[RMDB]
RNA sequence: GGGAACGACUCGAGUAGAGUCGAAAAAAAGAUAUGGAUCAUGACCCGCAGUACGCGAGAUAGCGUUGAAAGCAGAUCGGAAACGAUCUGCUGGAGCUAUCUCACUGCGCAUGAUCCUAAGUCAAAACAAGUGUCUUUUCUUCGGAAAAGACACUUGAAAAGAAACAACAACAACAAC
Reactivity to 2A3 in 0.01 (KOAc 150mM, MgCl2 10mM, bicine 150mM(pH8.5), 24C), signal-to-noise 1, nucleotides 027 to 126: a040a000a020g090a030u100a080u170g000g000a000u020c010a000u010g180a230c140c030c080g000c010a000g000u210a080c240g070c150g300a010g000a000u010a000g050c030g180u270u090g060a030a020a000g010c010a000g000a000u000c000g010g010a050a110a100c030g000a000u000c000u010g020c000u000g000g000a000g000c000u000a000u060c010u000c010a000c010u000g040c020g000c000a000u000g000a000u040c010c010u000a030a020g040u030c050a080a050a040a120
Reactivity to DMS in 0.01 (KOAc 150mM, MgCl2 10mM, bicine 150mM(pH8.5), 24C), signal-to-noise 1, nucleotides 027 to 126: a070a040a050g020a040u000a300u000g000g000a030u000c000a000u010g000a130c110c260c140g030c020a020g000u000a110c250g040c250g000a020g000a020u000a000g020c020g000u000u020g000a110a140a010g010c020a000g020a000u010c010g010g000a060a070a120c000g000a000u000c000u000g000c000u000g020g000a050g020c000u000a000u010c000u010c000a020c000u000g000c030g030c000a010u000g000a010u000c020c000u010a000a070g010u000c050a130a050a140a190
Chemical mapping of a 177-nucleotide RNA with 2A3 and DMS. The RNA was probed in 150 mM KOAc, 10 mM MgCl2 and 150 mM bicine (pH 8.5) at 24 C. The 2A3 profile rests on 2,339 reads.